[RMDB]
RNA sequence: GGGAACGACUCGAGUAGAGUCGAAAAGGGUUUGGAUUACAUCUAUAGUAACAUGAGCAGAAGUAAACAGAACAAGAAGUACUGCGGUUAUUCAAGUUCAAAGUUCACACUAUCGCAAUAAAGGGAACUAUUCAUGCGGAUUCGUCCGCAUGAAUAGAAAAGAAACAACAACAACAAC
Reactivity to DMS in 0.01 (KOAc 150mM, MgCl2 10mM, bicine 150mM(pH8.5), 24C), signal-to-noise 2, nucleotides 027 to 126: g010g020g020u010u020u010g000g010a190u000u000a060c070a060u030c140u020a060u000a060g030u000a020a090c040a070u010g000a110g020c010a060g030a050a090g000u000a050a030a060c080a130g000a040a050c010a120a210g000a040a010g000u000a030c040u010g030c130g020g000u000u000a080u000u010c020a050a300g010u010u000c050a020a040a140g000u000u000c080a050c090a100c080u020a060u000c050g010c070a050a060u030a060a040a110g010g000g000a050a150
Reactivity to 2A3 in 0.01 (KOAc 150mM, MgCl2 10mM, bicine 150mM(pH8.5), 24C), signal-to-noise 1, nucleotides 027 to 126: g080g000g000u010u030u100g030g010a020u030u080a000c010a050u070c030u040a050u020a120g070u030a010a160c050a130u100g040a020g000c000a010g010a100a000g040u100a000a040a120c040a020g020a020a010c010a120a000g030a030a020g030u030a010c010u030g080c120g150g000u020u020a050u000u040c030a010a010g030u000u000c090a190a000a000g030u060u050c040a040c000a000c070u130a150u190c040g000c070a040a060u090a210a060a010g010g040g020a030a030